[RMDB]
RNA sequence: GGGAACGACUCGAGUAGAGUCGAAAAGAACAUUGCUAACUGGUGGUGGAGCAGCUUUUUGCGGCCUUGACCAGUCAUGUCUUCAGACAAAGUCCAAGCCGCCCGAAUUUUCAGGCGGCUUUUUUAACUUCCCUUACUAGUUCGCUAGUAAGGGAAGAAAAGAAACAACAACAACAAC
Reactivity to DMS in 0.01 (KOAc 150mM, MgCl2 10mM, bicine 150mM(pH8.5), 24C), signal-to-noise 2, nucleotides 027 to 126: g030a110a030c050a020u020u020g020c180u010a120a010c000u000g000g020u000g000g000u040g000g010a300g000c010a040g000c250u000u020u060u050u030g000c020g000g070c020c030u000u000g000a020c020c000a040g000u000c020a020u010g010u000c080u030u030c190a170g000a130c200a100a100a130g000u000c020c040a060a040g010c040c000g000c020c000c040g050a040a290u120u020u040u000c010a020g000g060c000g020g020c000u000u000u000u000u000u000a010a080
Reactivity to 2A3 in 0.01 (KOAc 150mM, MgCl2 10mM, bicine 150mM(pH8.5), 24C), signal-to-noise 2, nucleotides 027 to 126: g000a030a010c050a070u080u110g080c110u160a120a020c030u030g000g010u010g040g040u040g070g100a090g020c050a020g000c010u120u110u040u160u300g020c030g030g090c000c020u070u150g120a000c010c000a000g010u010c000a000u010g000u010c020u080u030c030a030g050a080c010a090a130a020g030u050c000c000a000a000g000c010c000g010c000c020c030g150a240a240u230u100u160u080c010a040g020g000c000g000g000c000u000u000u000u000u000u050a020a000